The data come from the RNA Mapping Database (RMDB), library OK2TRN. This 177-nucleotide RNA was probed chemically with DMS and 2A3.
RNA sequence: GGGAACGACUCGAGUAGAGUCGAAAAGACAUGAACGGCCGGUUCAAAGUCGAGUCCAAGAAGGAUAUGCGCGAGAAACGCAAGAUCAAGUCGCCGAACAUCGCCGACUCGGUGAUUAUGUCGGCCAACUCAAUCGACGGUUCGCCGUCGAUUGAGUAAAAGAAACAACAACAACAAC
Reactivity to DMS in 0.01 (KOAc 150mM, MgCl2 10mM, bicine 150mM(pH8.5), 24C), signal-to-noise 1, nucleotides 027 to 126: g000a100c100a120u000g000a020a040c050g020g030c100c130g000g010u010u010c020a060a160a120g000u030c000g030a170g060u010c000c070a080a150g040a080a110g030g020a030u000a070u000g010c030g010c000g000a120g000a120a180a210c010g000c020a060a090g000a060u000c010a070a160g040u000c140g050c030c020g000a060a080c100a040u030c000g020c090c070g030a080c100u000c080g050g050u010g040a050u000u000a080u000g000u020c010g010g010c010c100a180
Reactivity to 2A3 in 0.01 (KOAc 150mM, MgCl2 10mM, bicine 150mM(pH8.5), 24C), signal-to-noise 1, nucleotides 027 to 126: g020a020c010a020u120g020a140a020c010g250g110c100c090g210g020u060u020c000a110a110a000g020u000c010g000a000g020u000c000c020a010a030g120a070a000g170g060a020u010a020u130g050c080g070c050g040a050g240a110a140a000c030g000c050a020a080g020a030u040c050a070a000g110u080c050g000c000c020g000a000a000c050a110u080c050g000c020c050g240a300c030u030c140g000g010u000g020a060u000u190a100u110g000u020c000g000g000c000c010a040
About this RNA
Reactivities are rounded to 0.1 and cut off at 0 and 3. Values cover nucleotides 27 to 126. For 2A3, 708 sequencing reads were counted.